[RMDB]
RNA sequence: GGGAACGACUCGAGUAGAGUCGAAAAGUGGCAUACUUCGGUAUGCCACAAACCAGACCCUAUCUCGAACACGCUCUACUGCGUGAUCCCAAGUAGAUCCCAAAAGUCGUGGGUUCGCCCACGACAAGAGCCUUAUAAGGUUCGCCUUAUAAGGCUCAAAAGAAACAACAACAACAAC
Reactivity to DMS in 0.01 (KOAc 150mM, MgCl2 10mM, bicine 150mM(pH8.5), 24C), signal-to-noise 2, nucleotides 027 to 126: g000u000g000g010c020a010u010a000c000u000u000c170g020g000u000a000u000g000c000c000a000c000a000a030a080c120c130a300g000a030c000c010c010u000a010u030c050u000c020g000a070a300c000a010c010g030c000u000c280u000a060c210u000g010c040g000u000g050a040u000c040c100c050a130a100g000u000a060g000a080u000c020c040c010a100a070a080a140g010u000c000g080u000g000g000g000u000u000c150g000c000c010c000a000c000g000a000c000a060a080
Reactivity to 2A3 in 0.01 (KOAc 150mM, MgCl2 10mM, bicine 150mM(pH8.5), 24C), signal-to-noise 4, nucleotides 027 to 126: g000u010g000g010c010a000u010a000c010u030u060c210g070g000u000a000u000g000c000c000a000c000a000a010a000c020c000a010g010a000c000c000c000u030a040u190c030u010c030g020a060a020c010a000c020g010c020u090c120u270a200c180u110g000c000g000u010g050a070u040c020c000c010a010a010g010u040a020g000a070u030c000c010c000a030a080a050a060g000u000c000g010u000g000g010g000u010u060c210g080c000c010c000a000c000g000a000c000a000a010